This 177-nucleotide RNA was probed chemically with DMS and 2A3. It was measured as part of the RMDB library TTRINS. Values cover nucleotides 27 to 126. For DMS the reverse transcriptase was MarathonRT. 2A3 adducts were read by reverse transcription with SuperScript II with manganese. The 2A3 profile rests on 2,807 reads.
[RMDB]
RNA sequence: GGGAACGACUCGAGUAGAGUCGAAAAGAUAUGGACGUGUACGAGCGAAGAACUAUGUCCGAAGACAAGUAUGGUCGGAAACGACCAUACUUGUUGUAGACAUAGGGAGCUCGACACGUCCUAAGUCGAUGGUUUAGGAGUUCGCUCCUAAACCAUCAAAAGAAACAACAACAACAAC
Reactivity to DMS in 0.01 (KOAc 150mM, MgCl2 10mM, bicine 150mM(pH8.5), 24C), signal-to-noise 1, nucleotides 027 to 126: g000a030u010a300u000g020g010a000c000g040u000g010u000a100c020g040a000g000c010g010a110a160g000a120a240c020u000a000u000g040u000c020c070g000a100a300g000a010c000a000a010g000u010a000u010g010g040u000c000g010g010a060a070a190c000g020a020c000c000a000u010a000c000u010u000g030u000u000g010u000a140g010a010c010a010u000a000g010g000g000a080g020c020u000c010g000a050c000a000c010g000u000c000c000u000a000a100g000u010c130
Reactivity to 2A3 in 0.01 (KOAc 150mM, MgCl2 10mM, bicine 150mM(pH8.5), 24C), signal-to-noise 2, nucleotides 027 to 126: g010a020u180a090u210g010g000a000c040g000u070g040u180a300c000g010a020g050c050g260a300a080g000a130a050c000u000a000u000g000u090c100c050g100a240a010g010a010c000a000a000g000u000a000u000g010g000u000c000g040g060a090a080a010c000g010a000c000c000a000u000a000c000u000u000g010u000u010g000u070a000g000a020c000a000u000a000g060g000g000a030g000c010u000c000g010a010c010a010c010g000u000c000c000u000a000a010g010u030c060